[RMDB]
RNA sequence: GGGAACGACUCGAGUAGAGUCGAAAAGGACCUGACGCGGCACACGGCCGAAGUGCCGUUGAUCGAUCAGCACGUCCACGGAUGCUGGCUGACCGAGGGGAACCGGCGGCGGUUCGAGAACGCGCUCGAUACGAGGAUCCUUCGGGAUCCUCGUAUCAAAAGAAACAACAACAACAAC
Reactivity to DMS in 0.01 (KOAc 150mM, MgCl2 10mM, bicine 150mM(pH8.5), 24C), signal-to-noise 1, nucleotides 027 to 126: g050g020a180c020c020u010g010a130c040g040c000g010g020c090a080c030a100c010g000g020c020c000g000a110a160g030u000g000c000c000g010u010u000g080a120u010c010g010a000u000c010a020g000c030a130c030g000u000c030c030a140c300g030g000a040u000g010c200u000g000g000c000u010g010a020c000c020g000a070g000g000g000g010a060a040c040c020g000g000c090g010g020c000g020g000u000u000c000g010a100g000a050a010c060g010c080g020c090u010c050
Reactivity to 2A3 in 0.01 (KOAc 150mM, MgCl2 10mM, bicine 150mM(pH8.5), 24C), signal-to-noise 1, nucleotides 027 to 126: g040g030a020c000c010u010g040a020c010g050c020g070g000c050a040c030a020c070g040g010c010c030g010a120a010g110u140g010c000c010g010u000u080g000a070u010c020g000a020u020c020a000g070c000a000c030g010u010c000c030a030c110g030g010a000u060g030c110u110g140g160c010u020g030a080c020c010g010a020g000g080g010g000a000a100c040c020g080g000c040g030g060c010g000g060u100u240c020g010a030g030a050a010c010g000c000g020c050u040c080
An RNA of 177 nucleotides, treated with DMS and 2A3 and read out base by base. Values cover nucleotides 27 to 126. 2A3 is a SHAPE reagent: it acylates the 2'-hydroxyl of flexible nucleotides of all four kinds. The RNA was probed in 150 mM KOAc, 10 mM MgCl2 and 150 mM bicine (pH 8.5) at 24 C. Values are in units of 0.01, from 0 to 300, in steps of 10.